[RMDB]
RNA sequence: GGGAACGACUCGAGUAGAGUCGAAAAGUAUCCCUAGAUGAUAAAACACCGCACAUGGCUCGUAAGAGCGGGUAAAUUAGCAAGUAAUGCAAAUUACGCGAGGUAACGCAUGGCCUAGGCUCGUUAGAAAAGGGAGAAUCCUUCGGGAUUCUCCCAACAAAACUUUAUCGUUCGCGAUAAAGUUUUGAAAAGAAACAACAACAACAAC
Reactivity to 2A3 in 0.01 (KOAc 150mM, MgCl2 10mM, bicine 150mM(pH8.5), 24C), signal-to-noise 2, nucleotides 027 to 156: g040u020a180u090c000c000c000u040a060g080a130u110g020a020u190a070a090a010a000c040a010c010c020g000c010a010c030a170u090g100g000c010u010c070g100u080a110a080g000a010g080c010g000g010g020u080a080a080a030u120u100a020g030c080a090a000g080u030a170a080u070g000c020a030a080a060u110u030a030c020g020c030g020a020g030g060u060a060a000c040g020c040a010u050g010g000c010c040u010a040g000g120c010u000c030g010u020u020a020g050a040a140a060a060g020g000g000a010g000a010a000u000c000c000u020u060c200g020g000g000a000u000u010c000u020c000c010c000a010a000
Reactivity to DMS in 0.01 (KOAc 150mM, MgCl2 10mM, bicine 150mM(pH8.5), 24C), signal-to-noise 2, nucleotides 027 to 156: g020u000a120u000c000c000c000u010a120g050a110u000g010a150u020a050a080a120a130c020a060c050c010g010c040a100c120a120u000g020g000c020u010c040g010u010a140a200g010a080g000c000g030g000g050u000a060a070a120u000u010a100g030c030a070a120g030u010a070a050u010g010c050a050a060a110u000u000a040c040g030c080g000a080g020g020u000a050a070c050g010c100a020u010g020g040c070c010u000a090g030g010c010u010c010g010u010u010a140g010a070a010a130a190g000g000g010a020g020a020a010u000c000c000u010u010c300g080g020g020a030u000u000c000u000c000c000c000a000a020
Conditions: 150 mM KOAc, 10 mM MgCl2 and 150 mM bicine (pH 8.5), 24 C. The record gives the reactivity of an RNA of 207 nucleotides to 2A3 and DMS. For 2A3, 748 sequencing reads were counted. For DMS, 3,226 sequencing reads were counted.